[RMDB]
RNA sequence: GGGAACGACUCGAGUAGAGUCGAAAAGCUAGUCGGAGACGACUAGCAACGAUCAGUUCGCUGAUCGGAACGUGCAUUCGAAUACGCUAGAAGCACGAAUAGGCGACGCAUAGCGUAUGACAGAGGAAGCUCAUGACAUGAAUAACAAGGCGUCGCGACGCUGAGUAUACUUCGGUAUACUCAGCGUAAAAGAAACAACAACAACAAC
Reactivity to 2A3 in 0.01 (KOAc 150mM, MgCl2 10mM, bicine 150mM(pH8.5), 24C), signal-to-noise 4, nucleotides 027 to 156: g010c000u000a000g000u000c010g030g020a050g000a100c010g000a000c000u000a000g010c000a000a000c000g000a000u010c000a000g060u090u120c130g030c120u000g000a010u000c010g010g040a040a010c030g000u010g000c040a300u000u030c010g010a070a030u050a020c030g000c020u010a010g000a030a000g000c010a000c010g020a030a070u200a110g080g000c000g000a000c000g000c020a060u060a060g010c020g010u020a010u020g070a040c040a030g050a010g100g070a090a060g080c010u030c080a100u070g040a030c010a080u170g080a180a050u150a210a040c090a080a000g070g000c000g010u000c000g000c000g010
Reactivity to DMS in 0.01 (KOAc 150mM, MgCl2 10mM, bicine 150mM(pH8.5), 24C), signal-to-noise 2, nucleotides 027 to 156: g030c010u000a000g000u000c000g060g020a300g000a300c010g010a030c000u000a020g000c000a020a020c030g010a010u000c000a020g010u000u010c300g040c020u010g000a000u000c000g010g000a070a050c030g000u010g020c000a300u000u000c050g030a190a090u000a010c000g020c000u010a040g010a080a040g000c030a030c000g020a080a070u000a120g010g010c000g020a030c000g010c030a200u000a020g010c010g050u000a000u000g000a250c100a060g000a100g030g000a070a190g020c040u000c040a080u000g020a150c060a110u000g000a100a140u000a050a110c080a060a140g010g000c020g010u000c000g000c000g000